Record summary: The record gives the reactivity of an RNA of 207 nucleotides to 2A3. Conditions: 150 mM KOAc, 10 mM MgCl2 and 150 mM bicine (pH 8.5), 24 C.
RNA sequence: GGGAACGACUCGAGUAGAGUCGAAAAACUGACGGUACGCCGUCAGAACGGUAGAAAAGAUGGUUUGAAAACCACGCCUUCUACCAAUAUAGUAAAUAAAUAGGCGGAGCGGUCAUGCGUGACCGCAAAAACAUCCUUGGCUUCGGCCAAGGAUGAAGGUAAGAUGACAGUUCGCUGUCAUCUUACCAAAAGAAACAACAACAACAAC
Reactivity to 2A3 in 0.01 (KOAc 150mM, MgCl2 10mM, bicine 150mM(pH8.5), 24C), signal-to-noise 2, nucleotides 027 to 156: a000c000u000g010a000c010g000g020u060a050c200g030c010c000g000u010c000a000g000a030a010c050g000g010u000a000g030a010a010a000a000g080a200u020g000g040u020u030u200g130a130a120a000a000c000c000a000c010g010c000c010u000u010c000u000a010c000c010a010a000u080a020u030a020g100u080a010a030a070u100a080a110a000u120a020g020g000c020g010g040a010g000c000g000g000u000c000a000u050g050c100g120u030g010a000c000c000g000c010a000a000a000a000a060c010a000u000c000c000u000u000g000g000c000u020u080c150g090g000c000c000a000a000g000g000a000u000g000a000a010